[RMDB]
RNA sequence: GGGAACGACUCGAGUAGAGUCGAAAAGAAUGGUGAGGGAGCCAACCCUUGUAAUUGCAAAGCGUGGUUUUAAUACCACUAUGCAAGCCAAGUCUAAGUCGCUGAACAUCUAUAAUGUAUUAGGCAUGGCUACUGCUAUAUUCGUAUAGCAGUAGCCAAAAGAAACAACAACAACAAC
Reactivity to DMS in 0.01 (KOAc 150mM, MgCl2 10mM, bicine 150mM(pH8.5), 24C), signal-to-noise 2, nucleotides 027 to 126: g000a150a070u000g000g000u010g030a000g000g000g020a110g020c140c150a100a010c000c000c000u030u000g050u000a110a090u020u010g000c010a020a020a080g050c300g030u010g030g000u000u000u010u030a070a030u030a100c020c000a020c040u000a170u000g000c010a000a020g000c060c000a020a250g000u000c020u010a060a110g000u010c090g040c000u020g000a080a060c030a010u020c070u060a010u060a050a010u010g000u060a060u000u010a110g000g010c050a110u010
Reactivity to 2A3 in 0.01 (KOAc 150mM, MgCl2 10mM, bicine 150mM(pH8.5), 24C), signal-to-noise 4, nucleotides 027 to 126: g050a020a030u040g000g000u030g000a010g010g000g030a000g070c020c000a000a020c000c000c000u010u000g030u100a020a070u000u000g000c010a000a000a060g190c090g060u000g040g130u010u010u140u180a190a130u270a070c000c000a000c010u010a010u020g000c000a000a000g000c010c000a040a020g000u000c010u020a020a060g060u130c040g030c080u030g070a070a050c010a050u020c060u200a190u200a240a100u100g080u010a170u080u100a040g020g000c030a030u050

Annotation
Chemical mapping of a 177-nucleotide RNA with DMS and 2A3. 2A3 adducts were read by reverse transcription with SuperScript II with manganese. It was measured as part of the RMDB libraries RFM100 and RFMREP. Values cover nucleotides 27 to 126.